Chemical mapping of a 177-nucleotide RNA with DMS and 2A3. The reactions ran in a buffer of 150 mM KOAc, 10 mM MgCl2 and 150 mM bicine (pH 8.5), at 24 C.
[RMDB]
RNA sequence: GGGAACGACUCGAGUAGAGUCGAAAAGAUAUGGACUCUCAUACGCACCGAUGAAAUCGGAAACGAUGGAGGUGCGUAUGAGGAGUCCUAAGUCAAACACUCGCACGAGUUCGCUCGUGCGAGUGAAGUUAUAGACGUAGUUCGCUACGUCUAUAACAAAAGAAACAACAACAACAAC
Reactivity to DMS in 0.01 (KOAc 150mM, MgCl2 10mM, bicine 150mM(pH8.5), 24C), signal-to-noise 7, nucleotides 027 to 126: g010a060u000a300u010g000g000a010c000u000c000u000c000a010u000a000c010g000c010a000c000c000g000a120u020g010a080a110a020u000c000g000g000a110a080a180c010g000a020u000g000g000a070g020g020u000g000c000g010u000a000u000g010a030g010g010a010g010u000c000c000u000a010a070g010u000c030a150a140a220c010a000c000u000c000g000c000a010c000g000a010g010u000u010c260g020c000u000c010g030u000g010c000g000a000g000u000g000a000a050
Reactivity to 2A3 in 0.01 (KOAc 150mM, MgCl2 10mM, bicine 150mM(pH8.5), 24C), signal-to-noise 5, nucleotides 027 to 126: g040a020u080a040u160g000g000a000c000u010c000u000c010a010u000a000c000g010c000a000c020c010g170a300u060g020a040a030a000u010c010g020g050a060a070a020c020g000a010u020g020g020a020g000g000u000g000c000g010u020a000u010g000a010g000g000a000g000u000c000c000u000a050a020g030u000c030a040a080a060c000a000c010u010c000g000c000a000c000g000a010g030u120u100c250g120c140u000c000g000u010g000c010g000a000g000u010g000a000a000
Reactivities are given for positions 27 through 126.